[RMDB]
Structure probing data (DMS and 2A3) for a 177-nucleotide construct. The reactions ran in a buffer of 150 mM KOAc, 10 mM MgCl2 and 150 mM bicine (pH 8.5), at 24 C. DMS adducts were read by reverse transcription with MarathonRT.
RNA sequence: GGGAACGACUCGAGUAGAGUCGAAAAUAAGUCUAGUUCGCUAGACUUACUAUCGGGAAAACAGCCUCCCGGCUCGAUCAGGCGGAUUCCGUCCAAGGGCUGCAACACACGUAUUCGUACGUGUGAAUACUUCGCCUCUAUUCGUAGAGGCGAAGUAAAAAGAAACAACAACAACAAC
Reactivity to DMS in 0.01 (KOAc 150mM, MgCl2 10mM, bicine 150mM(pH8.5), 24C), signal-to-noise 2, nucleotides 027 to 126: u000a020a020g010u010c000u000a000g030u000u000c300g020c000u000a000g000a010c000u000u020a020c090u010a110u000c040g020g000g000a030a120a050a240c040a000g000c000c020u010c000c000c000g010g000c010u000c040g010a090u000c160a100g010g010c010g010g010a220u000u000c040c000g030u010c030c140a100a080g000g020g010c000u010g010c100a070a150c020a010c000a010c000g000u000a010u000u010c190g050u000a000c000g000u000g000u020g010a040a110
Reactivity to 2A3 in 0.01 (KOAc 150mM, MgCl2 10mM, bicine 150mM(pH8.5), 24C), signal-to-noise 1, nucleotides 027 to 126: u040a010a010g000u000c000u000a000g000u030u050c100g020c070u010a020g010a010c010u010u020a030c000u030a060u040c000g000g040g000a010a140a060a020c000a030g000c000c040u000c000c000c000g060g000c010u010c010g080a170u120c040a050g010g000c040g150g000a300u300u170c060c010g000u000c030c000a050a060g050g010g020c000u030g010c030a170a090c000a000c000a000c010g000u000a030u020u050c210g050u020a000c000g000u020g000u040g000a000a010